[RMDB]
Annotation:
This 177-nucleotide RNA was probed chemically with DMS and 2A3. For 2A3, 146,246 sequencing reads were counted. Reactivities are given for positions 27 through 126. The reactions ran in a buffer of 150 mM KOAc, 10 mM MgCl2 and 150 mM bicine (pH 8.5), at 24 C.
RNA sequence: GGGAACGACUCGAGUAGAGUCGAAAACUCCAGCUGAAUCGAAGCGAGUAUCGAUUCAGAGAUCUGACUUGAUGCUUUCGCUUAUCACAACUCAAUGUUGUGAUAGCUGGCACAUUGAGUUAUGUACGAUGAACAGAUAUUUCGAUAUUUGUUCAUCAAAAGAAACAACAACAACAAC
Reactivity to DMS in 0.01 (KOAc 150mM, MgCl2 10mM, bicine 150mM(pH8.5), 24C), signal-to-noise 9, nucleotides 027 to 126: c090u000c010c030a150g000c010u000g000a020a010u010c010g010a020a080g010c180g010a170g020u040a060u000c000g000a010u000u000c000a000g000a100g010a090u010c070u000g000a020c010u000u000g000a020u000g000c090u000u010u020c120g000c010u020u030a010u000c000a000c000a000a000c000u010c290a140a090u050g010u000u000g010u000g010a010u000a000g000c010u010g010g010c270a140c070a050u000u000g010a020g000u000u000a030u030g010u020a100c190
Reactivity to 2A3 in 0.01 (KOAc 150mM, MgCl2 10mM, bicine 150mM(pH8.5), 24C), signal-to-noise 9, nucleotides 027 to 126: c020u000c010c000a030g010c010u010g010a010a010u010c010g010a040a000g150c070g090a050g100u090a070u040c000g000a000u000u000c000a000g010a000g010a090u020c030u040g010a010c000u010u020g010a020u010g050c030u040u100u120c050g010c040u120u120a010u010c000a000c000a000a010c010u060c090a150a180u300g000u000u000g000u010g000a000u000a000g000c010u020g020g000c030a010c000a050u020u050g020a010g010u020u030a100u160g080u050a040c090